[RMDB]
RNA sequence: GGGAACGACUCGAGUAGAGUCGAAAAGCAUUGUUCGCAAUGCAAAAAACCGUAGGCACCCUCUUCGAGGUCAAACUAUGAAACUUCGAAAGAGGUUUCACGAAUUUGACUACCCACCGAAUGGUGCCUAAACGGAAAAAACCGACUUCGGUCGGAAGUUACCAACAGGAUUCGUCCUGUUGGUAACAAAAGAAACAACAACAACAAC
Reactivity to DMS in 0.01 (KOAc 150mM, MgCl2 10mM, bicine 150mM(pH8.5), 24C), signal-to-noise 1, nucleotides 027 to 156: g050c000a080u000u010g020u010u000c190g010c020a090a050u020g060c010a010a060a100a130a150a100c000c010g010u020a050g000g040c030a020c020c020c000u000c050u000u000c030g000a180g000g020u000c000a010a000a010c080u000a050u020g010a000a010a040c010u020u000c000g010a080a130a300g000a050g030g000u000u000u010c000a000c020g020a070a110u000u000u000g000a100c010u030a020c030c020c030a300c140c000g000a170a040u000g000g000u000g000c080c010u000a000a000a020c000g010g000a000a030a010a010a120a090c000c020g010a010c020u010u000c260g090g010u040c000g000g010a010a070
Reactivity to 2A3 in 0.01 (KOAc 150mM, MgCl2 10mM, bicine 150mM(pH8.5), 24C), signal-to-noise 2, nucleotides 027 to 156: g020c000a000u000u020g040u030u090c120g050c070a010a010u010g000c060a130a040a000a000a130a080c000c010g010u010a020g000g000c000a000c020c000c000u020c000u000u000c000g000a010g010g020u000c010a000a010a040c060u030a020u050g010a010a000a000c000u010u000c010g060a080a040a060g000a000g000g020u000u010u000c010a010c010g040a300a300u000u000u000g000a000c000u050a050c050c050c030a060c010c000g030a010a020u170g000g000u000g010c030c000u000a000a000a000c000g000g120a050a000a000a000a050a080c000c000g010a000c020u040u040c270g090g000u020c010g010g010a010a020
Description: Source: RMDB library RNAMAK, as collected in RNAgym. The record gives the reactivity of an RNA of 207 nucleotides to DMS and 2A3. The reactions ran in a buffer of 150 mM KOAc, 10 mM MgCl2 and 150 mM bicine (pH 8.5), at 24 C.